[RMDB]
RNA sequence: GGGAACGACUCGAGUAGAGUCGAAAACUAUUGUUAAAAAUUGACGUGGUUAAUAGAAUAAUCAAACAAUUACACGUGUUGUGUUACAUGUACCUCAUUAUGAUGUAUAGGGACCAAAUUUUAGCAGGUGAGCAGUAAGAUUCGUCUUACUGCUCACAAAAGAAACAACAACAACAAC
Reactivity to 2A3 in 0.01 (KOAc 150mM, MgCl2 10mM, bicine 150mM(pH8.5), 24C), signal-to-noise 5, nucleotides 027 to 126: c020u030a060u110u070g040u040u020a030a020a010a070a120u110u220g060a020c000g010u010g020g100u190u110a060a020u080a170g240a100a120u180a070a050u140c070a050a020a110c030a030a020u080u030a020c020a010c020g010u020g160u130u140g010u040g010u040u060a040c000a010u060g020u020a000c000c020u000c000a070u040u290a150u300g010a000u020g000u000a010u010a030g070g010g000a000c000c020a060a030a050u040u060u010u010a000g000c020a030g000
Reactivity to DMS in 0.01 (KOAc 150mM, MgCl2 10mM, bicine 150mM(pH8.5), 24C), signal-to-noise 2, nucleotides 027 to 126: c020u010a100u010u010g000u010u070a030a000a030a050a070u000u000g010a030c040g000u000g010g000u020u040a010a020u000a090g010a140a110u010a070a120u170c180a060a090a130c200a050a040u000u000a050c020a010c010g010u000g040u020u010g010u040g010u000u000a010c050a070u000g030u000a010c010c040u000c010a070u010u080a090u010g000a000u000g000u010a020u000a040g010g000g010a070c050c010a020a020a060u020u000u000u000a020g030c100a000g000